An RNA of 170 nucleotides, treated with DMS and 2A3 and read out base by base. DMS adducts were read by reverse transcription with MarathonRT. For 2A3 the reverse transcriptase was SuperScript II with manganese. Source: RMDB library 15KLIB, as collected in RNAgym.
RNA sequence: GGGAACGACUCGAGUAGAGUCGAAAAUAUUUGGUGUAAAACCAGCUGUGUCUUUUGAUUAUCUUAUUAGGGAGGCUAAGACUAGAGUUUUAGUCGUCGUUAAUUCCCAAGAUGUCUAUAAGAGUCUGUACGGUUAGCUUCGGCUAACCGAAAAGAAACAACAACAACAAC
Reactivity to DMS in 0.01 (KOAc 150mM, MgCl2 10mM, bicine 150mM(pH8.5), 24C), signal-to-noise 5, nucleotides 027 to 129: u070a060u050u050u020g000g060u010g010u000a020a010a020a010c060c010a080g050c190u070g030u010g010u030c050u010u050u060u030g040a070u000u070a040u000c040u040u050a050u100u000a000g050g000g050a100g020g030c010u040a050a010g040a040c030u010a110g030a160g030u050u030u010u000a020g030u020c000g000u040c100g000u040u030a040a170u050u010c020c040c040a010a020g020a020u020g020u020c000u050a040u030a040a080g000a040g000u020c020u080g070u030a170
Reactivity to 2A3 in 0.01 (KOAc 150mM, MgCl2 10mM, bicine 150mM(pH8.5), 24C), signal-to-noise 3, nucleotides 027 to 129: u250a050u070u190u070g030g010u130g050u090a100a090a020a030c000c000a000g000c020u090g030u020g040u020c010u050u060u030u030g030a000u030u230a010u120c030u040u060a020u050u240a100g040g080g000a000g000g020c000u000a060a000g000a020c000u090a120g050a000g130u080u020u000u000a000g000u000c000g030u010c010g000u030u100a140a100u130u040c010c010c010a000a020g060a020u070g000u020c000u080a140u030a110a010g040a030g080u000c030u130g090u010a050
The 2A3 profile rests on 4,402 reads.